Background
An RNA of 207 nucleotides, treated with 2A3 and DMS and read out base by base. The DMS profile rests on 2,599 reads. Values are in units of 0.01, from 0 to 300, in steps of 10. The data come from the RNA Mapping Database (RMDB), library M2RFPK. Values cover nucleotides 27 to 156. For 2A3, 1,388 sequencing reads were counted.
[RMDB]
RNA sequence: GGGAACGACUCGAGUAGAGUCGAAAAGAGAGGGUAACCACCGGCGCGCGUCACUGAUAUAUCCACCGGGGGGUAAGGGGGGAAAAGGAUACAGCGCGACGAAGUUAGCACGCUGCCCCGUAAGGCUUGAAGAGUGUAGUGUUCGCACUACACUCAAUCGUAUUGAGAGAUUCGUCUCUCAAUACGAAAAAGAAACAACAACAACAAC
Reactivity to 2A3 in 0.01 (KOAc 150mM, MgCl2 10mM, bicine 150mM(pH8.5), 24C), signal-to-noise 2, nucleotides 027 to 156: g080a000g000a030g020g040g040u090a060a060c070c050a050c070c080g020g000c000g000c000g000c010g040u070c050a020c120u070g070a060u080a010u010a020u200c030c010a050c030c060g040g000g000g030g010g030u080a050a060g000g040g000g010g010g000a000a030a030a060g010g010a000u020a060c020a020g000c010g000c010g020a010c010g020a020a000g040u060u070a050g040c080a020c150g010c060u090g000c000c000c000c000g000u030a000a070g010g000c010u050u030g090a160a070g010a080g030u000g000u000a000g010u010g000u000u030c060g010c030a000c010u000a000c000a000c000u000c000a000a000
Reactivity to DMS in 0.01 (KOAc 150mM, MgCl2 10mM, bicine 150mM(pH8.5), 24C), signal-to-noise 2, nucleotides 027 to 156: g000a160g030a130g000g000g020u010a140a140c050c030a070c030c020g010g000c050g000c060g000c120g060u010c120a220c150u020g020a140u000a080u000a060u000c040c030a060c070c050g010g000g000g020g050g000u000a070a080g000g040g070g040g060g010a060a100a130a160g000g000a080u000a060c050a040g000c020g000c000g020a080c050g000a070a120g020u000u000a170g020c110a010c060g020c030u000g070c000c010c000c000g000u000a010a090g000g020c000u000u010g000a100a140g000a060g020u000g010u000a010g010u000g020u010u000c260g000c020a040c020u010a010c010a020c000u010c020a010a020